[RMDB]
RNA sequence: GGGAACGACUCGAGUAGAGUCGAAAAAAGUACGCCAUGCUAAUGUGCCUUGGAUGAUCCACAUCUCAGGGUCAGGCGCCGAUGAGCACAUUGAACUAUCCAUGUGGCUGAGAGCCCUCACAGUCCAAUGCAGGAACGAAUUCGUUCGUUCCUGCAUAAAAGAAACAACAACAACAAC
Reactivity to 2A3 in 0.01 (KOAc 150mM, MgCl2 10mM, bicine 150mM(pH8.5), 24C), signal-to-noise 1, nucleotides 027 to 126: a000a000g090u080a110c060g020c000c000a010u140g000c010u140a050a000u030g030u060g000c010c000u030u040g020g000a000u020g010a030u050c040c000a070c050a280u070c100u050c140a090g060g000g030u000c000a020g070g080c020g000c040c010g060a130u110g040a020g000c010a010c010a000u000u030g040a100a030c090u030a070u150c030c040a100u190g020u030g040g000c040u040g030a050g030a020g100c000c010c010u110c000a100c030a010g040u030c040c010a030
Reactivity to DMS in 0.01 (KOAc 150mM, MgCl2 10mM, bicine 150mM(pH8.5), 24C), signal-to-noise 2, nucleotides 027 to 126: a040a050g050u000a090c150g030c020c030a080u010g030c140u000a100a040u000g000u000g000c000c010u010u000g000g010a140u000g000a060u000c010c040a120c180a140u010c110u000c240a130g000g000g000u000c030a040g020g040c240g000c030c010g010a030u000g020a130g010c020a030c030a000u000u000g020a040a080c180u000a070u010c100c030a080u000g020u010g000g000c000u000g000a070g000a140g000c050c020c030u000c030a080c110a040g000u010c050c050a090
This 177-nucleotide RNA was probed chemically with 2A3 and DMS.
For DMS, 1,313 sequencing reads were counted.
The reactions ran in a buffer of 150 mM KOAc, 10 mM MgCl2 and 150 mM bicine (pH 8.5), at 24 C.
2A3 adducts were read by reverse transcription with SuperScript II with manganese.
Reactivities are given for positions 27 through 126.
Source: RMDB library OK2TRN, as collected in RNAgym.